[RMDB]
RNA sequence: GGGAACGACUCGAGUAGAGUCGAAAAAUGAUUUACGUGGUGGUAUCAUCGCAGCAACAGCAACUAUGGGGGUCAUCGUUGCAUUACCUGAUACACCAAUGUUACUUGGUGCAAUGAUUAUGGGUCCUACCGACUUAAAUUUCGAUUUAAGUCGGUAAAAAGAAACAACAACAACAAC
Reactivity to DMS in 0.01 (KOAc 150mM, MgCl2 10mM, bicine 150mM(pH8.5), 24C), signal-to-noise 8, nucleotides 027 to 126: a060u000g010a090u000u000u010a070c110g010u000g000g030u000g010g010u000a050u010c020a040u010c090g010c090a080g000c050a040a060c110a090g010c060a060a040c060u000a100u010g000g010g000g010g010u000c080a050u000c100g020u010u000g010c050a060u000u000a060c070c030u000g000a090u010a110c040a040c030c040a030a070u000g010u010u000a070c150u000u000g000g020u000g010c050a040a070u000g010a050u000u000a090u010g010g000g000u000c040c060
Reactivity to 2A3 in 0.01 (KOAc 150mM, MgCl2 10mM, bicine 150mM(pH8.5), 24C), signal-to-noise 5, nucleotides 027 to 126: a010u100g030a040u060u080u120a050c070g020u050g010g040u030g040g070u090a040u170c010a020u040c050g000c040a030g020c020a030a080c010a060g020c000a000a040c030u090a170u200g060g010g030g050g030u080c010a010u010c010g020u030u040g000c010a010u020u080a030c000c010u040g010a040u030a090c020a010c000c020a020a020u120g040u120u080a080c050u020u010g020g000u000g010c020a030a060u060g030a010u070u060a060u150g060g010g030u050c000c000